[RMDB]
Conditions: 150 mM KOAc, 10 mM MgCl2 and 150 mM bicine (pH 8.5), 24 C. The record gives the reactivity of an RNA of 177 nucleotides to DMS and 2A3. The 2A3 profile rests on 2,612 reads. It was measured as part of the RMDB library OK1LIB. DMS adducts were read by reverse transcription with MarathonRT.
RNA sequence: GGGAACGACUCGAGUAGAGUCGAAAAGAAGAGAGUAGAAGAUGGCCGCCAUGGUCCUAGCCCCUCGCUGGCGCCGGCUGGGCAACACCAUUGCACUCCGGUGGCGUAUGGUACAAGAGAGAAAGAAAAAUCCAUUUACGUUCGCGUAAAUGGAUUUAAAAGAAACAACAACAACAAC
Reactivity to DMS in 0.01 (KOAc 150mM, MgCl2 10mM, bicine 150mM(pH8.5), 24C), signal-to-noise 5, nucleotides 027 to 126: g020a070a070g000a070g020a070g010u000a050g020a100a110g010a090u020g000g020c070c040g010c060c080a060u020g020g020u010c030c040u010a090g010c020c020c020c030u010c070g000c050u020g000g020c040g010c010c020g010g000c100u010g010g010g000c030a050a060c140a130c190c150a140u010u010g000c030a040c030u000c010c010g000g010u000g000g020c040g000u030a040u010g000g010u010a070c090a040a070g000a060g000a120g000a100a050a090g000a020a060
Reactivity to 2A3 in 0.01 (KOAc 150mM, MgCl2 10mM, bicine 150mM(pH8.5), 24C), signal-to-noise 4, nucleotides 027 to 126: g090a100a020g100a000g040a010g030u170a000g020a150a000g060a120u120g020g000c010c020g000c030c010a070u170g020g000u010c040c000u030a020g020c000c000c000c000u010c030g000c040u070g020g020c030g000c010c040g050g000c140u050g000g000g000c010a040a010c030a030c130c000a110u050u030g000c010a000c020u010c030c010g010g060u060g050g000c000g000u040a070u090g040g020u060a030c080a120a010g050a000g040a010g130a060a060a010g180a010a150